[RMDB]
RNA sequence: GGGAACGACUCGAGUAGAGUCGAAAAAAUAGACCUGGCCGCCAUUGUCAUGCACAAUCUCGCAGAAGGCUUUGAUGCCUUCCUCGAACACGCCAUAGGUGGACGGAUAGGUAAUCAUGAAGGCGGAAUAUGCACCUGCUUUCGAGCAGGUGCAUAUAAAAGAAACAACAACAACAAC
Reactivity to DMS in 0.01 (KOAc 150mM, MgCl2 10mM, bicine 150mM(pH8.5), 24C), signal-to-noise 1, nucleotides 027 to 126: a080a090u020a030g000a120c010c010u020g010g000c030c030g010c010c070a100u000u000g000u010c030a030u000g020c290a080c240a070a080u000c080u000c020g010c180a090g000a020a010g000g000c000u000u000u000g010a050u000g010c000c000u010u010c000c040u000c020g020a020a070c160a100c100g010c110c080a070u000a200g000g030u000g010g020a080c020g020g040a070u000a010g000g010u000a040a100u000c080a040u000g040a020a090g020g010c080g010g010a080
Conditions: 150 mM KOAc, 10 mM MgCl2 and 150 mM bicine (pH 8.5), 24 C. Structure probing data (DMS) for a 177-nucleotide construct. DMS adducts were read by reverse transcription with MarathonRT. The DMS profile rests on 726 reads.